[RMDB]
RNA sequence: GGGAACGACUCGAGUAGAGUCGAAAAGAAGACGUGACGAAAAGUCACGUCAAUACAUAGACUACGCAACUGUGAAAAACACAACAAAAGUGUAAAAGCGUAGCAGGAUCGAGAGAUCCUGAAAAGAGAUGGGUGGUAAUUUCGAUUACCACCCAUCAAAAGAAACAACAACAACAAC
Reactivity to 2A3 in 0.01 (KOAc 150mM, MgCl2 10mM, bicine 150mM(pH8.5), 24C), signal-to-noise 2, nucleotides 027 to 126: g140a090a000g010a010c040g000u000g000a010c030g000a160a150a040a060g000u000c000a000c000g000u000c000a000a000u070a020c000a000u120a000g030a000c020u000a000c000g000c010a030a080c070u040g030u020g130a010a060a010a040a000c030a000c010a180a130c060a070a170a020a080g080u090g000u070a090a100a000a000g000c000g000u000a000g000c000a000g000g000a000u000c000g000a000g000a000g000a180u000c000c000u000g000a000a010a010a010g110a000
Reactivity to DMS in 0.01 (KOAc 150mM, MgCl2 10mM, bicine 150mM(pH8.5), 24C), signal-to-noise 3, nucleotides 027 to 126: g020a120a070g000a000c010g030u020g000a000c000g000a080a060a140a160g020u010c000a010c000g010u000c000a010a090u010a130c190a040u020a020g010a110c000u000a000c000g000c020a100a120c250u020g030u020g000a070a060a010a140a060c000a010c000a020a110c230a100a100a090a100g010u000g010u050a020a100a040a130g000c000g000u000a000g010c020a020g000g000a000u000c000g020a270g000a230g000a000u010c000c000u000g000a040a080a060a080g020a170